Chemical mapping of a 177-nucleotide RNA with DMS and 2A3.
It was measured as part of the RMDB library RFM100.
For 2A3 the reverse transcriptase was SuperScript II with manganese.
The 2A3 profile rests on 866 reads.
The RNA was probed in 150 mM KOAc, 10 mM MgCl2 and 150 mM bicine (pH 8.5) at 24 C.
RNA sequence: GGGAACGACUCGAGUAGAGUCGAAAACCACCGGAUAUCCGUGGAAAUCCUACAGCUAAUACGUAGCCAAUCCUUUAGGGGAUGUAGCAUAUUAGUUUGAACAAUCGGCACAUUUUUGAUGUGUGAAUCCCAAGCCAGAAUUCGUUCUGGCUUGGGAAAAAGAAACAACAACAACAAC
Reactivity to DMS in 0.01 (KOAc 150mM, MgCl2 10mM, bicine 150mM(pH8.5), 24C), signal-to-noise 1, nucleotides 027 to 126: c000c050a040c150c050g000g000a090u080a000u050c040c080g000u000g000g000a110a130a040u060c000c000u020a080c110a050g040c010u000a110a000u000a000c050g000u070a160g000c060c020a300a000u000c000c000u000u000u030a130g020g010g000g010a010u000g010u000a100g050c030a100u000a040u000u000a000g000u000u000u120g030a050a270c300a070a080u040c000g000g000c050a000c000a050u000u000u060u110u050g010a000u000g000u000g000u010g010a090a110
Reactivity to 2A3 in 0.01 (KOAc 150mM, MgCl2 10mM, bicine 150mM(pH8.5), 24C), signal-to-noise 2, nucleotides 027 to 126: c000c000a000c040c090g020g000a200u130a110u250c000c000g000u000g020g040a060a090a040u050c010c040u040a040c070a040g000c000u000a010a010u010a040c090g140u120a090g040c050c000a030a030u040c000c000u010u000u170a120g000g010g010g000a000u010g050u120a040g000c020a000u000a000u010u000a000g010u030u040u270g040a120a050c060a080a200u110c050g010g000c000a010c000a000u030u070u030u080u180g120a070u000g000u000g000u010g090a000a050